[RMDB]
Overview:
An RNA of 177 nucleotides, treated with DMS and 2A3 and read out base by base.
RNA sequence: GGGAACGACUCGAGUAGAGUCGAAAAGUUGUGGAUGGACGAAGCCGUGGCACGUGCGCACGGCCUGACCCCGCGGGCCCGGAUCGUCGCCCAGGCACUCGUCGGCGCCGAGCCCUACUACCACCUGCCCGUAUCACUGGUUCGCCAGUGAUACGGGAAAAGAAACAACAACAACAAC
Reactivity to DMS in 0.01 (KOAc 150mM, MgCl2 10mM, bicine 150mM(pH8.5), 24C), signal-to-noise 1, nucleotides 027 to 126: g020u020u000g040u010g000g000a120u000g050g030a090c080g030a090a160g020c030c020g040u000g000g060c010a230c260g050u040g010c010g000c040a030c040g010g000c000c050u000g000a120c160c020c030c050g030c150g000g000g010c000c010c000g000g000a100u010c030g000u000c040g010c080c010c040a090g020g020c090a070c090u010c110g000u000c040g000g010c030g000c030c050g000a070g000c010c000c000u020a070c080u000a180c030c030a030c020c120u020g020
Reactivity to 2A3 in 0.01 (KOAc 150mM, MgCl2 10mM, bicine 150mM(pH8.5), 24C), signal-to-noise 1, nucleotides 027 to 126: g080u070u040g050u030g030g050a150u090g130g010a000c040g090a040a010g060c040c030g000u060g010g000c070a020c300g170u240g080c180g030c060a000c020g090g010c010c020u020g010a030c000c020c020c060g100c010g020g000g000c000c040c040g000g010a080u240c030g020u040c050g070c030c000c060a060g080g010c000a030c120u090c080g010u020c030g000g000c010g000c020c020g000a000g020c000c000c000u000a070c010u000a010c000c010a040c030c020u100g040
For 2A3, 872 sequencing reads were counted. For DMS the reverse transcriptase was MarathonRT. Source: RMDB library OK2TST, as collected in RNAgym.